RNA sequence: GGGAACGACUCGAGUAGAGUCGAAAACAAAUGUGGCACAAGAACCCUUAUGGUGUCCUAGGUUGGGAGGCUUAUAAAAUCUUCCACAGGACAAUUCAAGAAAUGAGUGGGGACUUGUGGAAGAUUCGACUGAUUGUAUCUUCGGAUACAAUCAGUCAAAAGAAACAACAACAACAAC
Reactivity to DMS in 0.01 (KOAc 150mM, MgCl2 10mM, bicine 150mM(pH8.5), 24C), signal-to-noise 2, nucleotides 027 to 126: c030a060a110a070u050g000u020g010g000c000a000c000a010a010g030a100a230c020c020c000u020u010a130u000g020g040u000g000u000c000c000u000a110g020g030u000u010g020g030g000a000g040g030c050u050u010a120u080a080a070a100a200u000c000u000u000c000c000a030c000a000g050g020a150c000a070a070u030u020c070a180a150g000a050a120a030u020g000a040g010u040g020g000g000g010a270c010u000u000g020u020g000g000a020a060g000a130u020u000c170
Reactivity to 2A3 in 0.01 (KOAc 150mM, MgCl2 10mM, bicine 150mM(pH8.5), 24C), signal-to-noise 6, nucleotides 027 to 126: c060a010a090a050u210g030u180g150g000c010a030c000a020a060g030a180a170c020c000c000u090u150a120u160g100g000u030g000u000c000c000u040a160g170g010u100u050g060g010g000a010g020g000c080u180u070a120u200a230a100a010a020u030c000u000u000c000c000a000c010a000g000g000a000c020a020a030u140u100c030a090a030g140a200a200a140u220g040a050g110u190g030g060g030g070a040c010u010u020g000u020g010g030a050a020g060a060u130u170c080
This 177-nucleotide RNA was probed chemically with DMS and 2A3.
For 2A3 the reverse transcriptase was SuperScript II with manganese.